Structure probing data (2A3) for a 207-nucleotide construct. Reactivities are given for positions 27 through 156. 2A3 adducts were read by reverse transcription with SuperScript II with manganese.
[RMDB]
RNA sequence: GGGAACGACUCGAGUAGAGUCGAAAAGGGACUGGCCCGAUGAAGCCCGGCAACCUAACUUUAUUUAAGCGUAAAGUGAAGGUGUUAAUUCCAGCAAAAUGGUGUAUUCCGUUUUGGUAGAUAAGAGAAGCGUGACAUGAGUUCGCUCAUGUCACAAGCCUAAGUGAUCCUUCGGGAUCACUUAGGCAAAAGAAACAACAACAACAAC
Reactivity to 2A3 in 0.01 (KOAc 150mM, MgCl2 10mM, bicine 150mM(pH8.5), 24C), signal-to-noise 1, nucleotides 027 to 156: g000g000g020a000c000u020g000g040c000c000c030g000a050u080g110a070a000g030c010c000c000g060g010c090a090a160c000c000u020a060a000c030u020u000u050a020u040u050u140a070a050g130c030g010u030a000a000a000g010u030g100a130a040g000g020u030g010u000u050a070a040u250u000c000c000a000g000c000a040a000a000a040u060g000g030u100g000u150a100u110u150c000c000g000u000u000u060u000g010g020u150a120g000a130u080a300a090g070a010g050a150a070g090c030g130u020g010a000c000a000u010g000a000g000u040u130c250g060c130u030c000a000u010g000u000c000a010c000a000a000